[RMDB]
Conditions: 150 mM KOAc, 10 mM MgCl2 and 150 mM bicine (pH 8.5), 24 C. Structure probing data (2A3 and DMS) for a 177-nucleotide construct. Reactivities are given for positions 27 through 126.
RNA sequence: GGGAACGACUCGAGUAGAGUCGAAAAUAUAGCUGUGGAUCAGUUGACAUCAUCUUCUAGUGAUGAACUGCAAGACUAUGAAGACCUUGCCUUGGCACUCACAAGCGCAGAAGAAUCAAAUAGACGGACUAGCUUUAAAUUUCGAUUUAAAGCUAGUAAAAGAAACAACAACAACAAC
Reactivity to 2A3 in 0.01 (KOAc 150mM, MgCl2 10mM, bicine 150mM(pH8.5), 24C), signal-to-noise 4, nucleotides 027 to 126: u170a020u030a010g020c020u070g050u090g300g060a110u130c010a000g010u030u030g060a040c010a020u030c000a020u020c040u220u040c060u180a060g030u010g060a050u020g010a020a040c000u000g000c020a040a040g030a180c020u030a050u150g060a060a030g030a040c000c000u020u040g000c010c000u020u050g010g000c080a060c150u090c010a060c020a050a020g030c030g010c100a010g030a110a000g030a020a060u070c020a070a040a140u100a090g100a050c030g030g010
Reactivity to DMS in 0.01 (KOAc 150mM, MgCl2 10mM, bicine 150mM(pH8.5), 24C), signal-to-noise 6, nucleotides 027 to 126: u010a080u000a060g010c020u000g020u010g020g010a190u010c030a030g010u000u000g010a140c040a060u000c040a050u000c070u000u010c170u020a110g010u000g010a060u000g010a070a070c050u000g000c060a080a100g010a080c030u000a060u000g010a110a090g010a100c080c030u000u000g010c030c030u000u000g010g000c120a070c120u000c120a080c060a050a040g010c140g020c030a040g010a070a070g000a110a080u000c080a030a070a090u000a070g010a090c180g000g010
The data come from the RNA Mapping Database (RMDB), library OK2TRN.
For 2A3 the reverse transcriptase was SuperScript II with manganese.
DMS adducts were read by reverse transcription with MarathonRT.
For 2A3, 4,755 sequencing reads were counted.